Structure probing data (DMS) for a 177-nucleotide construct. The reactions ran in a buffer of 150 mM KOAc, 10 mM MgCl2 and 150 mM bicine (pH 8.5), at 24 C.
[RMDB]
RNA sequence: GGGAACGACUCGAGUAGAGUCGAAAAAAGUUGGCCCCGUAUCUUUGGUAGAAGGGGUGCCUGCGGUUUAGCAGACCGCAGGUCGCAGUGACUAGGGGGGAGCGACUGUUUACUAAAAACACAGGGGGGUUAAUCUAAUCUUCGGAUUAGAUUAACCAAAAGAAACAACAACAACAAC
Reactivity to DMS in 0.01 (KOAc 150mM, MgCl2 10mM, bicine 150mM(pH8.5), 24C), signal-to-noise 1, nucleotides 027 to 126: a040a060g020u010u000g000g000c000c000c000c000g020u010a080u010c030u000u000u000g000g000u000a050g010a040a060g010g000g010g050u000g000c000c000u010g000c000g000g000u000u000u000a140g000c240a300g000a000c000c000g010c000a000g020g000u000c110g030c070a060g000u000g000a070c050u000a070g010g010g000g000g000g000a100g000c040g010a060c060u000g020u000u030u000a090c120u000a060a060a090a040a080c070a050c060a090g000g020g000g010